[RMDB]
Record summary
Source: RMDB library OK1LIB, as collected in RNAgym. Chemical mapping of a 177-nucleotide RNA with DMS and 2A3.
RNA sequence: GGGAACGACUCGAGUAGAGUCGAAAAUCAGCCGGAAGAAACCACCCGUCACCAUAUGGCUGAAAGAUAUAAAGAAAGUGGUUAUUGGCGUAUACACAUCUUCAUUUACAAACUUUAGCAGUGAGGCAUCCUAGGGCACUUUCGAGUGCCCUAGGAUAAAAGAAACAACAACAACAAC
Reactivity to DMS in 0.01 (KOAc 150mM, MgCl2 10mM, bicine 150mM(pH8.5), 24C), signal-to-noise 2, nucleotides 027 to 126: u000c010a030g000c010c000g040g000a190a160g030a000a040a030c020c080a040c000c010c050g010u000c070a220c000c050a100u010a060u000g000g000c010u000g000a050a060a240g010a120u000a020u080a220a040a040g000a060a070a020g020u050g010g000u000u000a030u020u020g010g000c140g030u020a060u010a000c110a100c060a120u000c050u070u000c080a040u010u040u000a080c200a070a010a160c060u000u010u000a040g020c070a090g000u000g010a060g000g030c170
Reactivity to 2A3 in 0.01 (KOAc 150mM, MgCl2 10mM, bicine 150mM(pH8.5), 24C), signal-to-noise 3, nucleotides 027 to 126: u050c050a010g000c010c000g130g020a260a080g030a280a070a010c020c070a000c030c000c000g030u020c020a050c090c000a090u050a200u140g000g000c000u010g000a000a000a000g060a070u170a000u100a300a100a000g080a040a100a000g040u080g000g040u070u070a020u110u200g070g000c030g000u020a010u010a190c040a030c000a100u060c000u100u050c060a180u060u060u160a030c070a210a150a000c010u120u100u200a190g070c070a030g030u070g070a040g000g090c000
For DMS, 1,586 sequencing reads were counted.